Source information:
This 177-nucleotide RNA was probed chemically with 2A3 and DMS. Reactivities are given for positions 27 through 126. For DMS the reverse transcriptase was MarathonRT. For 2A3, 10,782 sequencing reads were counted. For 2A3 the reverse transcriptase was SuperScript II with manganese. Source: RMDB library TTRDEL, as collected in RNAgym.

RNA sequence: GGGAACGACUCGAGUAGAGUCGAAAAGAUAUGGAAAUACUCGAUAAGCAUGUGUCGGAAACGACAUAAAUGCUUUUGACGAGUUCUUCCUAAGUCAAAGGGUGCUUGAGUUCGCUCAAGCACCCAACAACAAUUCCUAGUUCGCUAGGAAUUGUUGAAAAGAAACAACAACAACAAC
Reactivity to 2A3 in 0.01 (KOAc 150mM, MgCl2 10mM, bicine 150mM(pH8.5), 24C), signal-to-noise 3, nucleotides 027 to 126: g010a010u050a020u060g010g010a020a010a020u070a050c000u010c010g050a090u070a300a030g010c000a010u030g000u010g000u010c000g000g000a050a020a010c010g000a000c000a010u020a010a200a040u050g020c000u050u050u050u110g070a020c000g000a000g000u020u000c020u020u000c000c000u010a050a010g040u010c030a120a120a070g000g000g010u000g020c010u000u010g020a030g000u090u150c280g070c170u000c000a000a000g010c000a000c000c000c010a000a000
Reactivity to DMS in 0.01 (KOAc 150mM, MgCl2 10mM, bicine 150mM(pH8.5), 24C), signal-to-noise 5, nucleotides 027 to 126: g000a010u000a110u010g000g000a010a020a060u000a010c010u000c000g020a050u010a020a010g030c000a030u000g010u010g010u000c000g010g000a030a030a070c000g010a010c000a000u000a020a090a090u000g010c000u000u000u000u010g010a300c030g000a020g000u000u000c130u000u000c000c000u000a020a110g000u000c020a110a110a160g010g000g020u000g010c000u000u000g010a010g020u000u020c270g020c000u000c000a000a000g000c010a000c000c000c000a000a020